[RMDB]
RNA sequence: GGGAACGACUCGAGUAGAGUCGAAAAGAUAUGGAUUACGCGAAGAACGGACUCAGGUCGGAAACGACCUGAGGUCCGGGAGCGUUGUCCUAAGUCAAAGCCAGAGGAAGUUCGCUUCCUCUGGCAAGCCAUAGAGUUUGUUCGCAAACUCUAUGGCAAAAGAAACAACAACAACAAC
Reactivity to 2A3 in 0.01 (KOAc 150mM, MgCl2 10mM, bicine 150mM(pH8.5), 24C), signal-to-noise 1, nucleotides 027 to 126: g010a000u050a030u120g010g010a010u070u030a020c010g050c000g160a300a100g020a180a020c040g020g000a010c000u000c020a000g000g030u010c020g010g000a080a050a050c020g000a000c010c000u000g020a020g010g000u000c000c020g000g000g000a040g010c000g000u010u010g000u010c000c010u010a090a010g060u050c040a140a090a000g010c020c010a000g030a010g000g010a000a020g000u080u190c230g170c140u000u000c000c000u010c000u020g020g000c010a000a000
Reactivity to DMS in 0.01 (KOAc 150mM, MgCl2 10mM, bicine 150mM(pH8.5), 24C), signal-to-noise 2, nucleotides 027 to 126: g000a060u010a300u000g010g010a000u000u000a010c000g030c000g030a100a130g000a180a230c000g010g000a220c000u000c000a020g020g000u000c020g010g000a150a080a200c000g000a020c000c000u000g000a010g000g030u000c000c000g000g000g010a110g010c000g010u000u000g010u000c000c000u000a040a140g000u000c050a040a110a170g000c000c000a010g020a000g030g000a020a000g000u000u010c260g030c000u000u000c000c000u000c000u000g000g000c000a000a000
Structure probing data (2A3 and DMS) for a 177-nucleotide construct. For 2A3 the reverse transcriptase was SuperScript II with manganese. Values cover nucleotides 27 to 126. For DMS, 1,509 sequencing reads were counted.